[RMDB]
RNA sequence: GGGAACGACUCGAGUAGAGUCGAAAAUAGCCUGGUAGCAUCACUAUCUGCUGCGGUGUCGAAUCUCGUCAAGAUCCUCAAAGAUACAGCUGCUAUUGACCUUGAAACCCGUCAAAAGUUUGGAGUCACUUGGGACAACCUUCGGGUUGUCCCAAGUAAAAGAAACAACAACAACAAC
Reactivity to DMS in 0.01 (KOAc 150mM, MgCl2 10mM, bicine 150mM(pH8.5), 24C), signal-to-noise 1, nucleotides 027 to 126: u030a070g010c080c000u000g000g000u010a130g000c000a040u000c040a070c120u020a010u010c000u000g010c040u000g000c040g000g060u030g080u000c040g000a220a030u030c030u000c050g020u000c090a210a200g000a060u010c020c030u010c130a050a100a100g000a050u000a230c090a030g030c080u000g000c000u000a050u000u010g000a040c000c020u000u040g000a100a070a140c020c000c010g020u020c150a000a180a170a170g020u030u020u000g000g000a040g020u000c250
Reactivity to 2A3 in 0.01 (KOAc 150mM, MgCl2 10mM, bicine 150mM(pH8.5), 24C), signal-to-noise 1, nucleotides 027 to 126: u030a000g090c000c000u080g080g040u060a070g020c100a070u060c050a050c080u140a030u030c060u090g000c000u000g000c020g020g000u000g070u000c000g000a060a090u000c010u000c100g080u040c060a000a000g000a230u030c030c070u040c000a190a190a000g050a000u150a100c010a020g080c000u070g000c000u020a040u040u070g000a070c020c000u060u030g000a010a000a020c000c000c020g090u170c100a100a100a000a000g000u070u070u000g070g020a020g000u020c020